This 207-nucleotide RNA was probed chemically with 2A3 and DMS.
The DMS profile rests on 3,155 reads.
Reactivities are given for positions 27 through 156.
RNA sequence: GGGAACGACUCGAGUAGAGUCGAAAAUCCAGGCGAGGCGUGGAGAGAGGGCCGCGGUGCUCUGGAGUAGAGGCUCUGCCUUCGAAACACCAUCGAUCGUCCCUUCUUCUUUACCUUCUUCUGGCUCUUCCGAUGAGACGCGACCGGUGGCAUCACCCAUAAAACUAUCCUUCGGGAUAGUUUUAUGAAAAGAAACAACAACAACAAC
Reactivity to 2A3 in 0.01 (KOAc 150mM, MgCl2 10mM, bicine 150mM(pH8.5), 24C), signal-to-noise 3, nucleotides 027 to 156: u060c000c000a000g020g010c010g010a010g050g050c150g040u020g020g000a010g000a000g000a010g000g000g020c000c010g000c000g010g000u000g000c010u010c010u000g010g010a010g000u000a000g000a010g000g000c030u060c250u300g050c030c000u140u160c010g010a010a000a000c010a010c140c000a000u010c000g090a300u040c000g000u010c000c000c000u100u020c020u060u010c000u000u020u010a010c000c000u000u030c000u000u000c010u010g030g000c010u010c010u080u000c020c020g050a100u150g030a040g020a030c050g020c050g090a070c060c020g000g030u030g030g030c050a090u150c020a110c000c010
Reactivity to DMS in 0.01 (KOAc 150mM, MgCl2 10mM, bicine 150mM(pH8.5), 24C), signal-to-noise 2, nucleotides 027 to 156: u010c010c020a050g010g030c300g000a050g040g000c100g030u010g010g000a110g030a150g020a070g000g040g030c070c030g030c040g020g060u000g000c040u030c030u010g030g040a240g030u000a150g000a170g000g000c030u000c150u010g030c000c000u000u000c010g000a270a150a260c060a030c190c010a070u020c010g000a050u020c050g000u010c000c000c010u010u030c020u010u000c030u000u010u010a020c000c000u010u000c040u010u000c070u010g010g020c090u000c050u000u010c060c050g020a170u010g010a220g040a070c040g010c010g000a190c030c020g020g000u000g020g030c060a100u000c010a090c050c050